The record gives the reactivity of an RNA of 207 nucleotides to 2A3. It was measured as part of the RMDB library OK3TST. The reactions ran in a buffer of 150 mM KOAc, 10 mM MgCl2 and 150 mM bicine (pH 8.5), at 24 C.
RNA sequence: GGGAACGACUCGAGUAGAGUCGAAAAUUGGGAGAUAAAAAGGGAUUGCCUGAAUAGCCUCAGAGGCAAAAGGAGAGGCCAAAAAAAGAGGAAGAGGUAAAGGGCAAAGGAUAAAAGUAUAAGGGGUUAAUAACACACUUGUCCUUGGGAAUGGUAAGAUGCUCAGUAGUUUCGACUACUGAGCAUCAAAAGAAACAACAACAACAAC
Reactivity to 2A3 in 0.01 (KOAc 150mM, MgCl2 10mM, bicine 150mM(pH8.5), 24C), signal-to-noise 1, nucleotides 027 to 156: u090u050g040g050g000a050g020a020u270a110a140a040a050a070g000g000g000a060u080u110g020c060c000u040g020a150a020u090a070g050c060c030u030c020a100g020a080g040g000c000a160a000a000a000g030g030a020g050a060g020g010c000c040a040a090a090a000a000a000a000g080a010g000g000a010a010g000a040g010g040u080a110a080a000g020g000g020c020a040a010a000g050g010a040u120a100a100a000a000g060u120a030u100a200a020g110g020g000g000u050u030a120a030u150a110a080c040a000c000a000c050u040u070g020u050c020c000u010u040g060g000g000a000a080u070g050g000u110a060a030